Annotation: An RNA of 207 nucleotides, treated with 2A3 and read out base by base. It was measured as part of the RMDB library M2RFPK. 2A3 adducts were read by reverse transcription with SuperScript II with manganese. Reactivities are given for positions 27 through 156. The RNA was probed in 150 mM KOAc, 10 mM MgCl2 and 150 mM bicine (pH 8.5) at 24 C.
[RMDB]
RNA sequence: GGGAACGACUCGAGUAGAGUCGAAAAGAAUCACCGUACCUAUUUAGGUUAACGCUCCAAGAUCGGUGGAUAGCAGCCCUAUCAAUAUCUAGGAGAACUGUGCUAUGUUUAGAAGAUUAGGUAGUCUAUUACACAGCCAUGUUCGCAUGGCUGUGAACGGAAAUAUGGGGUUCGCCCCAUAUUUCCGAAAAGAAACAACAACAACAAC
Reactivity to 2A3 in 0.01 (KOAc 150mM, MgCl2 10mM, bicine 150mM(pH8.5), 24C), signal-to-noise 1, nucleotides 027 to 156: g000a040a090u070c010a010c060c000g000u000a020c010c010u050a150u230u100u120a030g040g000u030u130a010a010c040g010c130u080c010c070a060a000g020a060u050c040g110g110u200g000g080a000u040a000g000c010a010g000c000c020c020u040a020u110c040a140a060u000a010u110c020u040a060g000g000a000g020a080a020c110u120g000u030g040c010u040a010u170g140u040u090u050a060g050a300a040g040a070u220u090a020g140g040u020a050g000u030c050u000a110u200u190a130c000a000c000a020g030c000c000a000u000g070u070u050c140g020c120a000u000g000g000c040u010g000u000g020a000a000